Annotation
An RNA of 177 nucleotides, treated with DMS and 2A3 and read out base by base. Reactivities are given for positions 27 through 126.
RNA sequence: GGGAACGACUCGAGUAGAGUCGAAAAGCCCAGGCGACUGUUUAUCAAAAGCACAGGACUAUGCAAAAUCGAAAGAUGAAGUAUAUGGUCUGACACCUGCCCGGUGCUGGAAGGUUAAAAGGAGUAGUACUAGAAUGGCAUUCGUGCCAUUCUAGUAAAAAGAAACAACAACAACAAC
Reactivity to DMS in 0.01 (KOAc 150mM, MgCl2 10mM, bicine 150mM(pH8.5), 24C), signal-to-noise 6, nucleotides 027 to 126: g010c020c000c000a130g000g010c030g010a070c030u010g000u010u000u010a080u030c080a060a190a130a050g000c040a040c040a140g020g010a070c070u020a030u010g000c030a040a130a190a020u000c000g000a080a100a140g000a010u000g000a090a250g000u010a020u020a070u020g000g000u000c040u010g000a110c110a060c050c030u000g000c060c020c030g010g020u000g000c010u000g000g010a130a100g010g000u020u010a030a040a060a040g000g010a100g020u000a070g010
Reactivity to 2A3 in 0.01 (KOAc 150mM, MgCl2 10mM, bicine 150mM(pH8.5), 24C), signal-to-noise 4, nucleotides 027 to 126: g040c000c010c010a010g020g100c020g020a060c030u010g150u150u060u130a130u080c080a070a030a010a010g010c020a020c000a040g030g000a030c040u020a010u030g020c010a010a100a000a110u000c010g080a040a050a060g010a010u020g040a090a020g020u030a030u010a020u150g060g030u000c070u060g020a020c020a030c020c010u070g000c000c000c000g030g010u030g020c040u010g000g050a100a050g030g000u090u120a020a060a030a020g060g010a060g030u120a020g030